Notes: The record gives the reactivity of an RNA of 170 nucleotides to DMS and 2A3. Reactivities are given for positions 27 through 129. The DMS profile rests on 3,975 reads. For 2A3 the reverse transcriptase was SuperScript II with manganese. The RNA was probed in 150 mM KOAc, 10 mM MgCl2 and 150 mM bicine (pH 8.5) at 24 C.
[RMDB]
RNA sequence: GGGAACGACUCGAGUAGAGUCGAAAAGCCAGGAUGAGUCCAUAGCGAUAGGAGGGGAUGCUAGGAGUCGGCGGCGACCGAAGCGAGGGGGAAAGUAAAGAGAGCAACGGGGCUAGCGAGUGGAUGUAAAGGGAACACUUCGGUGUUCCCAAAAGAAACAACAACAACAAC
Reactivity to DMS in 0.01 (KOAc 150mM, MgCl2 10mM, bicine 150mM(pH8.5), 24C), signal-to-noise 3, nucleotides 027 to 129: g030c040c000a050g000g010a110u010g040a060g090u100c060c040a170u030a060g030c110g030a050u050a070g000g040a070g020g010g080g000a120u090g020c070u070a070g000g000a110g060u040c170g040g030c200g030g040c030g000a060c060c030g030a060a010g000c110g020a060g070g030g000g030g080a060a000a000g010u100a080a130a000g010a070g070a130g060c020a030a070c080g020g000g070g000c020u090a090g020c000g040a050g000u110g000g050a070u070g000u060a030a050a120
Reactivity to 2A3 in 0.01 (KOAc 150mM, MgCl2 10mM, bicine 150mM(pH8.5), 24C), signal-to-noise 2, nucleotides 027 to 129: g030c000c000a010g000g010a030u110g010a030g100u050c070c000a130u120a140g020c010g110a060u070a080g010g010a010g000g020g000g000a020u070g000c030u010a080g000g040a000g020u040c060g000g030c000g060g000c010g060a060c000c000g000a040a030g000c010g020a050g000g000g000g000g000a000a000a000g040u160a040a020a020g020a010g010a000g000c000a060a060c020g020g000g000g050c020u000a000g010c000g020a040g030u040g050g010a050u100g000u100a030a000a040